[RMDB]
Notes:
Chemical mapping of a 207-nucleotide RNA with 2A3 and DMS. 2A3 adducts were read by reverse transcription with SuperScript II with manganese.

RNA sequence: GGGAACGACUCGAGUAGAGUCGAAAAAGGCCAAUUCGUUGGCCUGCCGCGAUAUGGAUCUUGGGAGACUUAGUGUGGCUUGGACCUCGGAAACGAGCUAGCCACAUGGGAGUCGAAGAACAAGAUCCUAAGUCUUCUUAACAGAUUCGUCUGUUAAAAGCUAAAGGCAUUUCGAUGCCUUUAGCUUAAAAGAAACAACAACAACAAC
Reactivity to 2A3 in 0.01 (KOAc 150mM, MgCl2 10mM, bicine 150mM(pH8.5), 24C), signal-to-noise 2, nucleotides 027 to 156: a000g020g000c040c000a010a000u140u090c270g100u070u010g000g000c000c010u000g020c020c030g090c070g030a070u050a060u260g010g000a000u000c000u000u020g000g030g000a050g000a010c000u010u020a040g050u010g000u000g000g000c000u000u110g100g050a240c080c000u010c020g010g000a040a090a090c000g000a000g010c010u010a000g000c010c000a000c000a000u000g000g170g010a000g000u010c000g000a000a030g020a000a010c000a000a010g000a020u050c000c000u000a010a000g000u000c000u150u030c040u030u060a010a010c010a010g050a090u010u120c130g040u030c100u010g020u050u020a050a110
Reactivity to DMS in 0.01 (KOAc 150mM, MgCl2 10mM, bicine 150mM(pH8.5), 24C), signal-to-noise 3, nucleotides 027 to 156: a010g000g000c010c010a020a100u000u010c240g040u000u000g040g000c010c010u000g010c030c030g050c090g000a180u000a160u000g010g040a030u010c000u000u010g010g000g010a300g010a060c000u000u010a300g010u000g030u000g020g020c020u010u010g050g000a050c220c020u000c020g020g000a140a120a300c020g000a010g020c010u010a020g030c000c010a020c010a010u020g010g000g020a040g030u000c020g000a090a120g020a160a130c000a040a030g000a040u000c010c010u010a040a130g000u010c050u000u010c070u010u010a040a020c000a030g000a080u000u010c300g040u000c000u010g000u000u000a020a060
Notes
It was measured as part of the RMDB library RNAMAK.